Description: The record gives the reactivity of an RNA of 177 nucleotides to DMS and 2A3. Reactivities are given for positions 27 through 126. For DMS the reverse transcriptase was MarathonRT.
[RMDB]
RNA sequence: GGGAACGACUCGAGUAGAGUCGAAAAGAUAUGGAGAAUCUCCGAGAGGCAAUGACGUCGGAAACGAUAAGACAGCCUGUUAGGAGAGUUCUCCUAAGUCAAACUCGCAGAGUUCGCUCUGCGAGAAUCUUUGUAAACAGUUCGCUGUUUACAAAGAAAAAGAAACAACAACAACAAC
Reactivity to DMS in 0.01 (KOAc 150mM, MgCl2 10mM, bicine 150mM(pH8.5), 24C), signal-to-noise 4, nucleotides 027 to 126: g000a050u000a300u010g000g010a020g010a030a110u000c010u000c000c000g000a190g000a020g000g020c010a120a090u010g000a140c300g020u000c010g010g000a140a070a190c000g010a020u000a120a120g010a170c150a090g010c010c000u010g030u000u000a120g000g000a000g000a050g010u000u000c020u000c000c000u000a000a050g010u000c030a130a060a170c000u000c000g010c010a000g000a020g010u010u010c200g000c010u000c000u000g000c000g000a000g000a000a030
Reactivity to 2A3 in 0.01 (KOAc 150mM, MgCl2 10mM, bicine 150mM(pH8.5), 24C), signal-to-noise 3, nucleotides 027 to 126: g010a010u090a040u130g000g010a000g000a020a010u030c020u000c010c010g090a100g000a010g210g000c080a180a220u120g020a050c070g010u010c020g000g010a090a120a050c010g010a020u030a110a100g100a070c030a120g300c020c000u030g090u190u090a000g000g000a010g000a000g010u030u000c000u000c000c000u010a050a000g000u010c040a060a040a070c000u000c000g000c000a010g000a000g030u070u150c180g050c090u010c010u010g010c010g000a000g000a000a020

The reactions ran in a buffer of 150 mM KOAc, 10 mM MgCl2 and 150 mM bicine (pH 8.5), at 24 C.